[RMDB]
RNA sequence: GGGAACGACUCGAGUAGAGUCGAAAAUGCAGACCAUCGCGUCGAGCCGCGCGAAUUCGAUCGGCGUGAGGCCGGCCGGCAUGCACACGUUGCGUAUCGCGCAGGUCGAGCAGCGGGUCGCCGGCAAUAAAUCCCGGUGAUUCGUCACCGGGAUUUAAAAAGAAACAACAACAACAAC
Reactivity to DMS in 0.01 (KOAc 150mM, MgCl2 10mM, bicine 150mM(pH8.5), 24C), signal-to-noise 2, nucleotides 027 to 126: u020g020c060a240g010a070c000c010a090u000c050g010c030g000u020c030g010a050g030c020c090g010c030g010c060g000a040a200u010u000c050g000a040u010c020g010g010c000g030u010g010a090g010g010c020c000g000g010c090c060g010g010c170a050u010g030c050a050c040a110c090g010u020u000g010c000g000u000a150u000c030g000c020g020c030a050g000g000u000c030g000a080g000c010a120g010c000g000g000g000u000c030g010c010c070g000g000c050a080a120
Reactivity to 2A3 in 0.01 (KOAc 150mM, MgCl2 10mM, bicine 150mM(pH8.5), 24C), signal-to-noise 1, nucleotides 027 to 126: u160g050c030a020g010a000c010c000a090u200c100g010c020g020u040c010g030a040g080c040c010g000c000g000c000g040a060a170u160u130c030g100a080u030c030g030g030c040g030u060g130a090g190g000c020c000g060g050c040c030g030g000c020a020u110g000c000a000c020a000c060g160u160u040g000c030g050u090a030u080c000g020c010g000c020a040g040g080u100c000g000a040g000c030a000g040c030g000g000g000u000c000g000c020c010g020g000c030a010a020